Overview: Source: RMDB library OK1LIB, as collected in RNAgym. The record gives the reactivity of an RNA of 177 nucleotides to DMS and 2A3. The DMS profile rests on 5,823 reads. Conditions: 150 mM KOAc, 10 mM MgCl2 and 150 mM bicine (pH 8.5), 24 C. Values are in units of 0.01, from 0 to 300, in steps of 10. The 2A3 profile rests on 2,286 reads.
[RMDB]
RNA sequence: GGGAACGACUCGAGUAGAGUCGAAAAGGGUCGCGGCGGCACGUGCCGUGGAAACGGCCGCGACCAAUCCGCUGAUCCGUGACGAGUUCGCCAAGGUGUUGGUGUCGUCGGCGGGUACCGCCUGGGCAUCAUGUUAGCGUUUCGACGCUAACAUGAUAAAAGAAACAACAACAACAAC
Reactivity to DMS in 0.01 (KOAc 150mM, MgCl2 10mM, bicine 150mM(pH8.5), 24C), signal-to-noise 2, nucleotides 027 to 126: g010g000g000u000c000g020c000g000g050c260g010g010c010a170c090g000u030g000c100c040g040u020g020g020a080a170a080c070g010g020c000c000g040c020g010a050c010c000a030a010u020c010c000g020c030u010g010a000u010c020c020g010u010g000a080c040g000a090g000u010u040c060g000c000c000a070a090g020g000u010g000u020u010g000g000u010g000u030c020g010u000c040g000g010c000g000g010g010u020a080c070c040g020c020c020u020g000g000g000c130
Reactivity to 2A3 in 0.01 (KOAc 150mM, MgCl2 10mM, bicine 150mM(pH8.5), 24C), signal-to-noise 4, nucleotides 027 to 126: g130g000g020u020c010g000c020g010g020c030g020g050c080a030c130g090u250g110c100c050g050u020g040g030a030a120a030c070g120g000c000c000g010c000g000a000c000c000a000a070u000c000c000g020c110u080g020a020u020c000c030g020u060g010a000c020g000a040g020u140u240c080g000c010c030a060a020g210g100u210g210u160u060g000g000u020g020u020c000g010u000c000g020g030c000g010g000g010u040a130c010c050g060c010c040u100g000g030g020c010